[RMDB]
RNA sequence: GGGAACGACUCGAGUAGAGUCGAAAAACAGUCAGUACGCUGACUGAGGGAAACGGGAGCCGGGCUUGGGACAAGAGCCAUCCCCAGUCCAAGGCCAAGUAGGCUCUAGUGAUGGUACGCCAUCACAAAAACUGGUCUACCUUCGGGUAGACCAGAACGUGCUUACAGUGUUCGCACUGUAAGCACGAAAAGAAACAACAACAACAAC
Reactivity to 2A3 in 0.01 (KOAc 150mM, MgCl2 10mM, bicine 150mM(pH8.5), 24C), signal-to-noise 1, nucleotides 027 to 156: a010c010a010g000u000c000a000g010u080a080c280g030c110u000g000a000c000u000g000a080g050g060g000a050a130a170c090g110g000g050a050g020c000c000g070g000g000c010u010u000g000g050g000a000c060a100a040g000a000g000c000c000a030u020c000c000c000c000a000g000u000c010c040a130a080g010g010c040c020a100a040g090u080a070g040g000c000u030c010u000a020g010u010g000a000u000g000g010u010a010c270g020c020c000a000u000c010a000c000a000a040a000a000a000c000u000g000g000u020c000u000a000c000c020u030u070c170g060g000g000u010a000g000a000c000c000a000g000a000a000

Structure probing data (2A3) for a 207-nucleotide construct.
The data come from the RNA Mapping Database (RMDB), library M2RFPK.
2A3 adducts were read by reverse transcription with SuperScript II with manganese.
The RNA was probed in 150 mM KOAc, 10 mM MgCl2 and 150 mM bicine (pH 8.5) at 24 C.